[RMDB]
RNA sequence: GGGAACGACUCGAGUAGAGUCGAAAAGAUAUGGACACGAUAAGUACACUCUUCAACAGCUCGGAAACGAGACAUGAAGUUGUACUUUUGACGUGUCCUAAGUCAAAGAUCGUGUUCGCACGAUCAAGUGCAUAGAUACGUUCGCGUAUCUAUGCACAAAAGAAACAACAACAACAAC
Reactivity to DMS in 0.01 (KOAc 150mM, MgCl2 10mM, bicine 150mM(pH8.5), 24C), signal-to-noise 4, nucleotides 027 to 126: g000a030u000a300u000g010g000a000c010a020c000g010a110u000a010a020g000u000a020c000a010c200u000c000u000u000c010a040a080c280a160g010c010u000c020g000g010a090a090a200c000g000a020g000a040c100a150u000g010a020a010g000u000u000g020u000a000c000u000u010u010u000g000a130c080g020u000g000u000c000c000u000a010a080g030u000c030a070a120a120g010a000u000c000g010u000g000u000u010c200g000c000a010c010g010a000u000c000a040a100
Reactivity to 2A3 in 0.01 (KOAc 150mM, MgCl2 10mM, bicine 150mM(pH8.5), 24C), signal-to-noise 4, nucleotides 027 to 126: g030a010u080a020u180g000g000a000c010a000c020g030a050u020a080a000g000u030a000c030a030c060u190c010u030u000c010a100a130c030a200g010c010u010c000g010g030a040a100a070c010g020a010g030a050c040a110u110g010a000a000g010u000u000g000u000a000c000u040u010u030u070g170a050c010g000u000g000u000c000c000u000a010a010g030u020c050a090a060a070g000a000u020c010g010u030g040u090u120c300g010c130a000c000g000a000u000c020a010a010